[RMDB]
This 177-nucleotide RNA was probed chemically with DMS and 2A3. It was measured as part of the RMDB library OK1LIB.

RNA sequence: GGGAACGACUCGAGUAGAGUCGAAAACAUCCAGGCGGGAGGACGUAGGCGUACACGUCCUUUGUCAGCACUGGGUGCUGAGGCGACGCAAGCGGCGCUGUCACGCCCGGGGUAUGGGUUAUACCACCCAGGACGCGAUCUUCGGGUUGCGUCUUGGAAAAGAAACAACAACAACAAC
Reactivity to DMS in 0.01 (KOAc 150mM, MgCl2 10mM, bicine 150mM(pH8.5), 24C), signal-to-noise 9, nucleotides 027 to 126: c070a020u000c010c000a030g010g010c000g000g010g000a010g000g000a010c000g020u000a110g010g020c140g010u030a060c080a040c000g010u000c000c000u000u000u000g000u060c010a040g000c010a110c000u000g000g000g010u000g010c110u010g000a300g000g000c020g010a040c020g000c070a110a130g020c050g010g000c020g010c040u000g010u010c030a060c060g000c020c000c010g000g000g000g020u020a090u000g000g000g010u010u020a080u020a150c030c020a100c150
Reactivity to 2A3 in 0.01 (KOAc 150mM, MgCl2 10mM, bicine 150mM(pH8.5), 24C), signal-to-noise 9, nucleotides 027 to 126: c020a010u010c000c000a010g020g010c000g000g000g000a000g000g000a000c000g000u020a050g040g130c070g040u070a030c030a000c020g000u000c000c000u000u000u010g080u030c010a020g010c020a020c050u010g010g000g010u000g000c030u020g020a020g010g000c010g000a020c000g010c070a090a070g060c030g040g000c010g000c030u050g220u130c010a010c030g010c000c010c000g010g010g010g000u120a080u090g030g000g010u060u040a070u040a060c010c020a020c000
The 2A3 profile rests on 97,251 reads. Reactivities are given for positions 27 through 126. For 2A3 the reverse transcriptase was SuperScript II with manganese. DMS (dimethyl sulfate) methylates the pairing face of unpaired adenines and cytosines. The DMS profile rests on 97,922 reads.